[RMDB]
RNA sequence: GGGAACGACUCGAGUAGAGUCGAAAAAUGAGAUUUCUGAAGGACUUGAAGAAGAGGCACAGCACUUUGGUCCAAAUGAGUUUGAAGCUCGUGCUGGAAUUGUUAAUUGGAUUAAAGAAACGGCUGUUAUUAUAAUAGUGUUCGCACUAUUAUAAUAAAAAGAAACAACAACAACAAC
Reactivity to DMS in 0.01 (KOAc 150mM, MgCl2 10mM, bicine 150mM(pH8.5), 24C), signal-to-noise 3, nucleotides 027 to 126: a080u010g020a080g010a120u010u000u010c030u010g020a110a070g020g000a080c060u000u020g000a090a100g010a080a080g010a090g010g000c110a080c030a050g010c040a220c010u000u010u000g010g000u000c000c010a000a030a070u010g000a040g010u000u000u000g010a110a180g000c000u000c220g020u000g030c050u000g000g000a030a050u000u010g010u010u010a070a130u000u010g000g000a070u010u010a010a030a040g000a090a080a110c300g010g020c060u010g000u010
The record gives the reactivity of an RNA of 177 nucleotides to DMS. The reactions ran in a buffer of 150 mM KOAc, 10 mM MgCl2 and 150 mM bicine (pH 8.5), at 24 C.